[RMDB]
RNA sequence: GGGAACGACUCGAGUAGAGUCGAAAAAUCUGUUGCGGGAUAUAAGGAAGUUCUACUUAUGGCUAAUUCAGAGAGAUGAAUUUAAGGAAUUGGCAGCUGCAGGCAAAGCACCAUACAUUGCAGAGACACCCAAUAUACCAUUCGUGGUAUAUUGGGUAAAAGAAACAACAACAACAAC
Reactivity to 2A3 in 0.01 (KOAc 150mM, MgCl2 10mM, bicine 150mM(pH8.5), 24C), signal-to-noise 4, nucleotides 027 to 126: a000u040c010u030g040u040u060g010c040g030g050g020a020u070a010u020a200a020g050g030a070a050g050u120u020c040u080a110c020u060u050a040u110g050g000c010u030a020a020u040u060c040a010g040a010g030a030g030a130u090g070a060a210u080u100u170a090a040g050g030a060a050u060u030g020g000c000a010g020c020u030g000c010a010g010g000c040a080a020a010g020c010a010c030c010a010u060a080c040a060u060u120g040c020a020g040a030g020a100c020
Reactivity to DMS in 0.01 (KOAc 150mM, MgCl2 10mM, bicine 150mM(pH8.5), 24C), signal-to-noise 6, nucleotides 027 to 126: a060u010c030u000g010u000u000g010c090g010g000g010a090u010a030u020a050a070g000g000a100a110g010u000u000c060u010a110c030u000u000a050u000g010g000c040u000a040a050u000u000c020a060g010a160g010a110g010a110u000g010a080a070u000u000u000a090a110g000g000a050a060u000u000g000g010c040a110g020c020u000g010c040a050g000g010c070a040a070a080g000c060a070c030c020a050u000a070c100a060u010u000g010c040a060g000a110g010a110c200